[RMDB]
RNA sequence: GGGAACGACUCGAGUAGAGUCGAAAAAGGCGUUGUUGGGGGGGAGAUGGGCGUACCUACGGGAAUCCCUGGUUUCCCCUGAUGUCCAGUCCCUCCCCCGUCCGAGCGAAGGGGGAUUCCGGAACACCUUAUGUGUGUUCUUCGGAACACACAUAAGAAAAGAAACAACAACAACAAC
Reactivity to DMS in 0.01 (KOAc 150mM, MgCl2 10mM, bicine 150mM(pH8.5), 24C), signal-to-noise 2, nucleotides 027 to 126: a050g000g000c100g010u020u010g000u010u020g010g000g020g010g010g010g000a050g020a130u000g010g020g010c120g030u000a140c110c040u000a100c200g000g020g020a110a080u000c080c040c080u000g010g000u000u010u000c000c000c000c030u020g010a030u000g020u000c020c020a120g000u000c010c020c010u000c010c010c000c020c010g000u000c020c000g020a110g020c130g010a040a070g000g010g010g010g000a100u010u000c030c020g010g000a050a050c110a050c110